[RMDB]
RNA sequence: GGGAACGACUCGAGUAGAGUCGAAAAGAUAUGGAUCUGAAAACAGGCUGAUGACCGUAUGGGGUAGAUGGUCGGAAACGACCAUGCGAAUACAUACGCAAGGCCUGUUAUGUAGGAUCCUAAGUCAGUACUCAUAAUUCUUCGGAAUUAUGAGUACAAAAGAAACAACAACAACAAC
Reactivity to 2A3 in 0.01 (KOAc 150mM, MgCl2 10mM, bicine 150mM(pH8.5), 24C), signal-to-noise 3, nucleotides 027 to 126: g040a020u110a040u250g000g000a000u010c010u020g060a020a030a000a020c010a010g010g000c010u030g040a300u190g040a120c050c020g000u000a000u020g040g020g040g010u020a050g010a010u010g000g000u000c020g020g000a080a100a020c020g020a000c000c000a010u060g080c000g010a010a000u030a010c000a000u010a000c000g000c040a170a300g000g000c020c010u010g010u000u000a000u020g010u010a010g010g000a000u000c000c000u000a110a010g100u010c070a020
Reactivity to DMS in 0.01 (KOAc 150mM, MgCl2 10mM, bicine 150mM(pH8.5), 24C), signal-to-noise 5, nucleotides 027 to 126: g000a040u000a300u010g000g000a010u000c000u000g000a240a060a050a030c000a010g000g010c000u000g000a140u000g010a110c300c000g010u000a010u000g000g000g000g020u000a130g000a020u000g000g010u000c000g010g000a080a090a180c000g000a020c000c000a000u000g010c000g000a090a140u080a030c010a000u000a010c000g000c040a080a160g000g030c000c000u000g010u000u000a010u020g000u010a230g000g000a020u000c000c010u000a020a100g000u000c060a130